[RMDB]
RNA sequence: GGGAACGACUCGAGUAGAGUCGAAAAUCGGCCACGGCCGCAGCCGGCACCACCGACGUGGUGUGGGAAUACCGGGCGAAAGGCGUGCUCACCACCACCCUUCUGGGGAUCAUUGCCCUCGAUGACGUGUAAAAGGAACGUUCGCGUUCCUUUUACAAAAAGAAACAACAACAACAAC
Reactivity to DMS in 0.01 (KOAc 150mM, MgCl2 10mM, bicine 150mM(pH8.5), 24C), signal-to-noise 3, nucleotides 027 to 126: u010c060g000g020c010c030a110c120g000g020c050c090g010c140a170g000c010c030g000g020c050a050c010c020a010c020c140g040a130c300g020u000g000g010u000g050u000g020g020g000a120a070u000a100c070c040g000g000g020c030g010a070a120a050g020g000c040g000u000g000c050u000c080a060c070c020a070c060c040a070c060c030c030u000u000c060u000g000g010g020g020a060u000c090a060u000u020g010c050c000c000u020c140g000a070u010g000a090c200g000
Reactivity to 2A3 in 0.01 (KOAc 150mM, MgCl2 10mM, bicine 150mM(pH8.5), 24C), signal-to-noise 1, nucleotides 027 to 126: u050c010g060g010c000c050a030c060g060g010c030c030g000c050a020g060c010c000g090g000c020a010c010c000a010c000c080g300a110c110g030u010g020g040u010g010u000g060g030g000a030a000u060a150c060c000g070g070g010c010g010a080a070a000g050g000c000g010u030g000c020u070c000a040c040c010a020c000c000a060c000c000c020u120u000c040u050g000g000g060g000a000u070c040a090u050u210g020c000c000c030u000c000g050a050u060g060a020c070g070
Background: Structure probing data (DMS and 2A3) for a 177-nucleotide construct. Conditions: 150 mM KOAc, 10 mM MgCl2 and 150 mM bicine (pH 8.5), 24 C. For 2A3 the reverse transcriptase was SuperScript II with manganese. The DMS profile rests on 2,473 reads. The 2A3 profile rests on 1,465 reads. Reactivities are given for positions 27 through 126.